Source information:
Chemical mapping of a 177-nucleotide RNA with DMS and 2A3. Source: RMDB library TTRINS, as collected in RNAgym. Values cover nucleotides 27 to 126.
[RMDB]
RNA sequence: GGGAACGACUCGAGUAGAGUCGAAAAGAUAUGGACCAUGUCGUCGAGGUCGAACUAUUGGACAUGUGUUCGGAAACGAACACAUGUCCAACGAAUUCGACUACCCACCGACACAUGGUCCUAAGUCCUGAACUAAUGUCUUCGGACAUUAGUUCAGAAAAGAAACAACAACAACAAC
Reactivity to DMS in 0.01 (KOAc 150mM, MgCl2 10mM, bicine 150mM(pH8.5), 24C), signal-to-noise 5, nucleotides 027 to 126: g010a110u000a220u000g000g010a010c000c010a010u000g000u000c300g030u000c000g000a100g010g010u000c010g010a000a010c070u000a300u000u000g000g000a010c000a000u000g010u000g030u010u000c020g010g010a080a080a220c010g010a000a030c000a010c010a000u000g000u000c000c000a000a020c070g030a040a260u000u000c000g010a030c000u010a040c050c060c100a300c120c010g000a010c000a010c000a000u000g000g000u010c000c000u000a000a060g000u000c050
Reactivity to 2A3 in 0.01 (KOAc 150mM, MgCl2 10mM, bicine 150mM(pH8.5), 24C), signal-to-noise 1, nucleotides 027 to 126: g040a020u110a020u120g000g000a000c000c020a000u000g010u050c210g010u000c010g060a030g000g000u000c000g010a010a020c080u170a200u300u290g000g000a000c000a010u010g000u010g010u000u010c020g000g000a050a050a010c000g020a000a000c000a020c010a000u000g000u030c000c000a030a000c000g010a000a120u000u030c000g010a000c010u010a030c070c120c020a100c010c010g000a000c000a010c000a000u000g010g000u000c000c000u000a000a000g020u040c000